[RMDB]
This 177-nucleotide RNA was probed chemically with 2A3 and DMS. As a SHAPE reagent, 2A3 marks flexible, mostly unpaired nucleotides at the ribose 2'-OH. 2A3 adducts were read by reverse transcription with SuperScript II with manganese. Values cover nucleotides 27 to 126. The reactions ran in a buffer of 150 mM KOAc, 10 mM MgCl2 and 150 mM bicine (pH 8.5), at 24 C.
RNA sequence: GGGAACGACUCGAGUAGAGUCGAAAACAGAUAACCAUUUUGAUUGUUCAUAAAGUGUUACCUUCAUAUUUUGCAAAACCUCUUAUCCAAUUGCGAGUGCAAAGUAGAGUUGGAACAUUCCAUUUAAACGUUCAGGGUAAUUCGUUACCCUGAACGUAAAAGAAACAACAACAACAAC
Reactivity to 2A3 in 0.01 (KOAc 150mM, MgCl2 10mM, bicine 150mM(pH8.5), 24C), signal-to-noise 3, nucleotides 027 to 126: c030a000g130a040u070a050a070c000c030a110u060u070u030u150g180a230u050u050g020u050u050c060a050u130a200a170a090g000u000g060u000u080a280c000c000u000u000c020a000u010a000u040u000u000u010g010c010a000a020a070a130c050c000u070c030u080u120a100u140c080c060a030a090u120u100g060c050g030a020g050u020g000c010a000a000a000g000u000a020g040a000g020u000u010g000g000a000a000c010a030u040u090c060c020a040u060u080u220a100a210
Reactivity to DMS in 0.01 (KOAc 150mM, MgCl2 10mM, bicine 150mM(pH8.5), 24C), signal-to-noise 2, nucleotides 027 to 126: c140a080g020a150u030a090a150c080c040a130u040u000u040u000g020a070u000u010g000u010u040c070a110u040a080a090a080g000u000g000u000u000a120c000c050u010u000c010a130u010a020u000u000u000u010g000c010a080a050a160a110c290c000u000c040u000u000a090u040c180c120a050a060u010u000g040c200g000a070g020u000g000c010a030a010a000g000u010a000g010a130g040u000u000g000g000a080a010c040a040u000u000c020c050a090u030u050u010a040a100